[RMDB]
Record summary: Chemical mapping of a 177-nucleotide RNA with DMS and 2A3. Conditions: 150 mM KOAc, 10 mM MgCl2 and 150 mM bicine (pH 8.5), 24 C. The 2A3 profile rests on 2,246 reads.
RNA sequence: GGGAACGACUCGAGUAGAGUCGAAAAGAUAUGGAUGUCGAAGAUCCUACCCACCCGUGGUUCGGAAACGAACUUACGGAGGGAUUAGACAUCCUAAGUCAAACAUUAUUACUUCGGUAAUAAUGAAUCCAUUAAGGACGUUCGCGUCCUUAAUGGAAAAAGAAACAACAACAACAAC
Reactivity to DMS in 0.01 (KOAc 150mM, MgCl2 10mM, bicine 150mM(pH8.5), 24C), signal-to-noise 2, nucleotides 027 to 126: g010a040u010a280u000g010g000a000u000g020u000c030g010a140a120g010a050u000c010c000u000a120c020c070c130a300c070c010c010g030u000g000g000u000u000c030g000g000a040a080a240c000g010a010a030c000u000u020a000c020g010g000a090g030g030g000a020u000u010a150g000a060c020a000u020c000c000u000a070a080g010u000c060a130a120a300c000a000u000u000a000u000u000a030c000u000u000c230g030g010u000a000a000u010a020a010u000g000a050a120
Reactivity to 2A3 in 0.01 (KOAc 150mM, MgCl2 10mM, bicine 150mM(pH8.5), 24C), signal-to-noise 2, nucleotides 027 to 126: g030a010u120a080u250g000g000a020u000g000u060c050g070a220a050g110a110u020c000c000u020a200c100c030c010a060c000c000c000g020u020g000g030u000u030c000g010g020a110a040a080c000g000a010a010c000u150u290a010c030g000g030a050g010g000g000a000u000u080a040g010a000c000a000u000c000c000u020a040a010g080u040c070a150a000a060c000a030u000u000a000u020u000a020c000u000u050c280g180g000u000a000a000u030a020a000u040g050a010a090